[RMDB]
RNA sequence: GGGAACGACUCGAGUAGAGUCGAAAAUUUCAAAUGGCGCUAUGAGCUGCCAAUGAUGUAUCACCAUCAUAUCUCAUUAUUCUUUGCUAAAUGUGAUAAUAAUGUGAUCCGCUAACAUAAAAAAAGUGUCAAUCAGUGGGUUCGCCCACUGAUUGACAAAAGAAACAACAACAACAAC
Reactivity to 2A3 in 0.01 (KOAc 150mM, MgCl2 10mM, bicine 150mM(pH8.5), 24C), signal-to-noise 1, nucleotides 027 to 126: u040u000u030c000a000a090a110u040g080g000c010g050c010u000a070u300g140a040g130c110u110g010c110c000a000a000u000g000a000u030g180u070a280u110c070a000c060c000a000u150c000a000u070a070u140c000u000c000a030u010u080a080u170u060c040u140u020u000g000c030u070a260a000a000u300g000u010g000a000u000a020a000u000a000a000u070g040u000g020a000u030c050c040g000c100u010a120a000c010a160u280a140a170a030a000a000a060a000g060u000

Source: RMDB library RFM100, as collected in RNAgym. Structure probing data (2A3) for a 177-nucleotide construct. Values cover nucleotides 27 to 126.